[RMDB]
RNA sequence: GGGAACGACUCGAGUAGAGUCGAAAAUCGUCUUCGCAGUAGAACACUGUAAGCCCGUCUACUGAUGCUUCGUUGUUCACUUCGAAACCAAGGCUUGACAGGCCGUCUAACAGUGGGCGCAUUGUGUCGAAACUUUCAGGGAGUGACGCCAAGAUCAAGCGUACUACAUGUUCGCAUGUAGUACGCUAAAAGAAACAACAACAACAAC
Reactivity to 2A3 in 0.01 (KOAc 150mM, MgCl2 10mM, bicine 150mM(pH8.5), 24C), signal-to-noise 2, nucleotides 027 to 156: u110c020g080u000c040u020u040c050g000c010a040g020u110a060g010a000a040c040a030c030u060g060u250a040a070g000c050c000c040g050u020c050u110a180c070u100g040a170u090g080c020u020u040c010g040u020u050g060u060u070c030a020c090u030u020c010g030a020a010a000c090c060a070a040g050g010c110u030u030g070a060c050a070g040g000c050c040g000u030c050u070a140a050c010a040g020u080g060g000g000c000g000c040a110u070u150g020u020g010u060c010g000a110a000a080c030u000u090u120c090a030g060g040g030a030g030u010g040a000c020g010c030c010a030a020g030a080u090c030a050
Reactivity to DMS in 0.01 (KOAc 150mM, MgCl2 10mM, bicine 150mM(pH8.5), 24C), signal-to-noise 1, nucleotides 027 to 156: u020c080g010u000c070u000u000c020g000c070a030g000u000a120g040a000a110c110a070c010u000g000u010a220a070g030c030c080c020g000u000c040u000a010c070u020g040a230u010g000c020u000u010c100g010u000u000g070u040u000c100a190c040u000u000c070g000a050a130a080c080c100a070a070g020g000c010u000u020g000a170c040a140g000g040c050c040g060u000c050u020a130a110c170a160g020u000g020g030g000c100g000c130a130u010u000g030u010g040u020c020g040a080a010a010c040u000u010u000c000a110g000g000g000a070g010u010g010a090c080g050c040c040a010a190g050a140u000c000a130
Source information: Chemical mapping of a 207-nucleotide RNA with 2A3 and DMS. 2A3 adducts were read by reverse transcription with SuperScript II with manganese. The 2A3 profile rests on 1,007 reads. For DMS the reverse transcriptase was MarathonRT. The DMS profile rests on 1,891 reads.